About this RNA
Chemical mapping of a 207-nucleotide RNA with DMS. For DMS, 1,567 sequencing reads were counted. Source: RMDB library RNAMAK, as collected in RNAgym.

RNA sequence: GGGAACGACUCGAGUAGAGUCGAAAAGAGGGCGUCUUCGGACGCCCUCAAAAACCGUAGGUCCUAAGGACUGAUGACCCAUUUCACUUCGAAAGAGGUGAGAAUGGCAAGGUCCGAAGGACCUAAACGGAAAAAUAGGUGGAUUCGUCCACCUAAACUCACUUCAUUACUUCGGUAAUGAAGUGAGAAAAGAAACAACAACAACAAC
Reactivity to DMS in 0.01 (KOAc 150mM, MgCl2 10mM, bicine 150mM(pH8.5), 24C), signal-to-noise 1, nucleotides 027 to 156: g040a010g010g120g040c000g090u010c000u000u010c280g070g080a070c030g060c000c000c000u010c000a020a040a020a000a040c010c010g010u000a060g030g000u010c000c010u010a060a300g000g000a000c000u000g000a080u000g000a090c300c000c000a120u000u030u000c000a030c010u000u000c000g000a300a220a300g010a000g010g040u040g000a020g040a000a050u000g000g060c030a070a230g000g020u010c000c000g050a300a070g010g000a000c010c000u000a000a030a000c050g030g010a050a000a090a090a180u000a020g000g010u010g000g000a110u010u000c300g000u030c010c010a020c000c000u000a000a000a050